[RMDB]
RNA sequence: GGGAACGACUCGAGUAGAGUCGAAAAUAGGCGCAGUUUAAUCCGGCCAUCUUGUGGCAAGCGGCGCUCGGCAAUAUCUAAUUUGGAGAGAAUUUUAAUCCGCGCGGCUAAACGGCGGCUUAAAUGAUACUAGUGCACUGUUCGCAGUGCACUAGUAAAAAGAAACAACAACAACAAC
Reactivity to DMS in 0.01 (KOAc 150mM, MgCl2 10mM, bicine 150mM(pH8.5), 24C), signal-to-noise 1, nucleotides 027 to 126: u020a070g000g060c000g000c030a020g010u000u000u000a060a170u000c090c030g020g000c020c020a000u000c190u000u010g040u000g010g020c040a090a080g010c000g010g000c300g000c020u000c030g040g000c050a100a020u000a100u020c060u020a040a140u000u010u000g010g010a140g010a070g020a060a100u000u000u010u000a010a060u010c000c030g030c020g000c030g010g000c130u010a030a070a100c040g000g000c000g010g000c070u000u000a010a060a040u000g020a230
Conditions: 150 mM KOAc, 10 mM MgCl2 and 150 mM bicine (pH 8.5), 24 C. This 177-nucleotide RNA was probed chemically with DMS. Reactivities are given for positions 27 through 126. For DMS, 796 sequencing reads were counted.